[RMDB]
About this RNA: An RNA of 177 nucleotides, treated with 2A3 and DMS and read out base by base. For DMS, 42,924 sequencing reads were counted. The RNA was probed in 150 mM KOAc, 10 mM MgCl2 and 150 mM bicine (pH 8.5) at 24 C. Reactivities are given for positions 27 through 126.

RNA sequence: GGGAACGACUCGAGUAGAGUCGAAAAGCUCGAGAUCUCGUGGAGCUUUCAAUCGUAGCUCCAACCACGGUUCAGUGCUUCCAAUUCAGCCUGCCGUAUUGGAUUCAAUUGCCGAGGAAUCAUCGUAAUUAUGAUUAGGAUUCGUCCUAAUCAUAAUAAAAGAAACAACAACAACAAC
Reactivity to 2A3 in 0.01 (KOAc 150mM, MgCl2 10mM, bicine 150mM(pH8.5), 24C), signal-to-noise 9, nucleotides 027 to 126: g020c010u010c020g040a040g010a120u020c040u030c110g070u080g010g000a000g000c000u030u100u110c100a090a140u160c060g070u070a000g020c000u000c000c000a010a030c030c020a010c010g040g000u180u160c060a030g030u030g120c010u070u000c030c020a040a060u090u070c020a030g050c020c040u080g030c040c010g010u010a050u010u060g010g000a000u030u020c030a070a090u080u100g030c010c010g030a030g030g050a050a060u080c050a050u080c060g060u070a080
Reactivity to DMS in 0.01 (KOAc 150mM, MgCl2 10mM, bicine 150mM(pH8.5), 24C), signal-to-noise 9, nucleotides 027 to 126: g010c030u000c010g010a090g010a080u000c050u010c080g020u000g010g010a020g010c000u000u000u010c130a100a110u010c180g010u000a030g010c080u000c010c010a080a110c060c060a060c020g010g000u000u010c070a040g050u000g010c020u000u000c050c060a040a080u000u000c080a080g010c030c050u000g010c030c050g010u000a060u000u000g000g000a040u000u000c030a070a060u000u000g010c020c010g000a070g010g010a100a070u000c060a090u000c080g000u010a100